Chemical mapping of a 177-nucleotide RNA with 2A3 and DMS.
It was measured as part of the RMDB library OK2TRN.
Reactivities are given for positions 27 through 126.
Conditions: 150 mM KOAc, 10 mM MgCl2 and 150 mM bicine (pH 8.5), 24 C.
For 2A3, 1,675 sequencing reads were counted.
For 2A3 the reverse transcriptase was SuperScript II with manganese.
RNA sequence: GGGAACGACUCGAGUAGAGUCGAAAAGGCCGCCAGCCUCAUGCGCCUAGGGCAGGCGGUGCUACAGCUGGAGCUGUCCAGGGAGGGGAAGGCGUGGGCCGGCGCAUCGGGCGCGAUGGGCGGCUGCCCCUCAGAGCAGUUUCGACUGCUCUGAGGGAAAAGAAACAACAACAACAAC
Reactivity to 2A3 in 0.01 (KOAc 150mM, MgCl2 10mM, bicine 150mM(pH8.5), 24C), signal-to-noise 2, nucleotides 027 to 126: g020g040c010c000g000c050c020a010g000c010c010u010c000a030u020g010c000g020c000c010u080a120g060g010g030c060a030g010g130c050g020g040u080g000c020u080a060c030a060g010c030u190g110g080a130g050c020u040g060u070c050c020a060g020g120g010a230g010g000g020g050a080a050g070g010c140g000u080g000g020g080c100c050g020g030c010g000c010a040u060c050g020g000g000c090g030c050g040a160u100g060g030g060c000g010g020c000u010g000c010
Reactivity to DMS in 0.01 (KOAc 150mM, MgCl2 10mM, bicine 150mM(pH8.5), 24C), signal-to-noise 1, nucleotides 027 to 126: g000g020c000c000g040c060c000a220g010c010c000u020c180a030u010g040c000g010c000c020u000a300g050g000g010c110a060g030g000c020g030g020u000g010c060u010a030c030a120g030c030u010g020g010a200g020c110u000g000u020c030c060a190g000g000g020a140g030g000g030g010a100a170g000g010c070g020u010g000g000g000c060c060g000g000c030g000c000a030u000c150g030g020g030c070g030c100g010a070u000g050g020g030c000g010g020c000u000g000c050